[RMDB]
Structure probing data (2A3 and DMS) for a 207-nucleotide construct. The 2A3 profile rests on 2,816 reads. It was measured as part of the RMDB library OK3TST. Conditions: 150 mM KOAc, 10 mM MgCl2 and 150 mM bicine (pH 8.5), 24 C.

RNA sequence: GGGAACGACUCGAGUAGAGUCGAAAACAGGAAUAUCUUUAACUAAGUCAAUGAUUUCAUCAACAGUUAGAUCUAUUUUAAAGUUAAUCAUAUAGGCAUUGAUUUUUAAAAGGUAUGUAGCCUUGACUACAUUCUCAUUAAUUAACCAUUCCAAGUCGUCUUACCAUGUAUUCGUACAUGGUAAGACAAAAGAAACAACAACAACAAC
Reactivity to 2A3 in 0.01 (KOAc 150mM, MgCl2 10mM, bicine 150mM(pH8.5), 24C), signal-to-noise 5, nucleotides 027 to 156: c040a060g010g070a040a040u060a040u070c030u040u090u040a070a060c050u050a080a020g020u010c010a020a040u040g040a050u080u190u160c070a110u060c050a060a120c020a050g040u080u100a060g030a080u000c030u060a100u110u140u060u200a120a190a020g000u010u080a020a020u090c030a020u120a040u090a200g080g000c010a000u000u050g010a020u030u100u000u040u110a050a130a000a010g040g000u040a020u030g010u000a000g030c030c050u040u090g030a050c010u010a010c020a020u050u000c040u000c030a070u070u140a090a030u070u090a030a060c020c020a040u100u060c060c010a070a020g220u180c100
Reactivity to DMS in 0.01 (KOAc 150mM, MgCl2 10mM, bicine 150mM(pH8.5), 24C), signal-to-noise 1, nucleotides 027 to 156: c090a100g000g000a090a030u000a050u000c010u000u020u000a010a090c080u000a040a110g020u090c060a040a070u000g010a220u010u000u010c080a110u000c060a080a140c060a130g020u020u010a120g000a110u000c020u000a110u020u000u000u020a030a080a150g000u000u000a040a030u020c010a150u010a080u000a100g010g030c010a050u010u010g020a000u000u000u010u000u070a010a100a080a160g000g000u010a010u000g020u010a060g010c020c050u000u020g020a050c000u010a040c020a030u010u000c030u000c060a210u000u020a020a050u000u010a040a050c020c010a080u000u000c000c020a030a220g000u000c090